RNA sequence: GGGAACGACUCGAGUAGAGUCGAAAAUGCGUCAAAGAGCUUCCUCCAUACAGUCCGCCCCAGGCGUUGUCCCUGUUCCAGCUGCUCGAAACGCCAGCUCCAACAACGUAGUUACUGUAACUGUCAAACUGCUCAUCGCUUUCGAGCGAUGAGCAGUAAAAGAAACAACAACAACAAC
Reactivity to DMS in 0.01 (KOAc 150mM, MgCl2 10mM, bicine 150mM(pH8.5), 24C), signal-to-noise 3, nucleotides 027 to 126: u010g010c040g000u020c070a080a130a140g010a130g010c030u000u020c040c010u000c080c050a100u000a120c090a090g000u000c070c050g000c070c010c030c040a110g000g010c030g010u010u000g020u010c030c010c020u000g000u000u000c030c030a120g000c030u000g030c020u000c040g010a050a060a070c080g020c090c040a080g000c060u000c050c020a050a080c090a030a050c110g000u010a040g020u000u000a100c130u000g010u000a010a090c060u000g020u020c200a090a090
Reactivity to 2A3 in 0.01 (KOAc 150mM, MgCl2 10mM, bicine 150mM(pH8.5), 24C), signal-to-noise 1, nucleotides 027 to 126: u010g010c030g010u040c060a120a060a000g090a020g030c030u040u000c010c010u000c000c000a010u000a090c010a030g050u020c030c000g040c050c000c000c010a000g020g010c040g000u050u050g010u000c070c010c010u020g040u050u030c010c010a010g000c000u000g000c000u030c100g000a050a060a000c020g060c000c000a040g010c010u030c010c030a070a080c020a000a000c070g080u050a030g030u210u060a080c040u070g030u090a050a010c010u030g060u120c020a080a150